An RNA of 207 nucleotides, treated with 2A3 and DMS and read out base by base. The reactions ran in a buffer of 150 mM KOAc, 10 mM MgCl2 and 150 mM bicine (pH 8.5), at 24 C. The DMS profile rests on 3,444 reads. DMS adducts were read by reverse transcription with MarathonRT. Reactivities are given for positions 27 through 156.
[RMDB]
RNA sequence: GGGAACGACUCGAGUAGAGUCGAAAACAGCGCAUGUUCGCAUGCGCUGAAAAAAACCUUUGUGGUGAACUACUGCAUACUUUUGACGGUCCCAUUGGGACCGAUAAGUAUGAUAGCACCACUCUGGUAAAAAUCCUGCAACUUCGGUUGCAGGAAACAUAUACCGAAUCUUCGGAUUCGGUAUAUGAAAAGAAACAACAACAACAAC
Reactivity to 2A3 in 0.01 (KOAc 150mM, MgCl2 10mM, bicine 150mM(pH8.5), 24C), signal-to-noise 3, nucleotides 027 to 156: c010a010g010c000g000c000a000u020g030u110u260c300g040c150a000u000g000c000g030c000u000g000a010a000a000a000a000a010a000c000c010u010u000u010g010u010g010g000u010g020a170a110c010u070a030c070u160g060c030a010u010a000c010u020u110u130u220g270a120c030g000g000u010c000c000c120a280u260u300g000g000g000a000c000c000g000a010u040a000a000g000u010a000u000g000a010u020a000g000c000a000c000c000a000c000u000c000u000g010g010u070a130a100a000a000a040u000c000c000u010g000c000a010a010c010u070u100c270g100g000u000u000g020c000a000g000g000a000a000a000
Reactivity to DMS in 0.01 (KOAc 150mM, MgCl2 10mM, bicine 150mM(pH8.5), 24C), signal-to-noise 1, nucleotides 027 to 156: c030a010g010c000g020c010a050u000g060u010u020c300g010c010a020u010g010c010g000c010u010g040a010a010a040a120a100a050a050c010c000u000u000u000g010u000g010g020u000g000a130a120c020u000a080c100u000g020c000a010u000a010c010u000u000u000u010g020a220c090g000g040u000c010c010c010a300u000u020g060g030g040a000c000c000g030a010u000a000a000g000u000a020u000g010a200u000a000g010c010a020c000c000a010c000u000c030u030g000g030u000a020a080a080a090a100u000c000c000u010g010c000a020a000c020u000u000c260g050g000u000u000g030c000a000g020g000a000a000a050